[RMDB]
RNA sequence: GGGAACGACUCGAGUAGAGUCGAAAAGAGAUAAGCGUUCGCGCUUAUCUCAAAAACCGUAGGGAUGCUCCAGACAUGCUCCCGACUUCGAAAGAGGUUGGGAGCAACAGCUGGGCAUCCCUAAACGGAAAAACCCAAUUUGUUCGCAAAUUGGGAACUAAGGAUAUGGGUUCGCCCAUAUCCUUAGAAAAGAAACAACAACAACAAC
Reactivity to DMS in 0.01 (KOAc 150mM, MgCl2 10mM, bicine 150mM(pH8.5), 24C), signal-to-noise 1, nucleotides 027 to 156: g000a040g040a010u000a000a010g020c000g090u000u010c230g020c070g020c000u000u000a000u000c010u020c000a030a040a060a050a080c010c000g030u000a060g020g000g000a020u000g000c030u020c000c010a060g020a090c050a300u000g010c000u000c000c000c010g050a000c000u000u000c000g010a260a130a300g000a010g000g020u010u010g010g020g010a000g000c000a010a000c070a150g000c020u000g020g000g010c000a010u000c000c000c000u000a010a010a010c020g000g020a110a040a080a150a230c000c000c000a020a050u010u010u010g000u000u000c300g050c040a020a020a060u000u010g020g010g010a020a040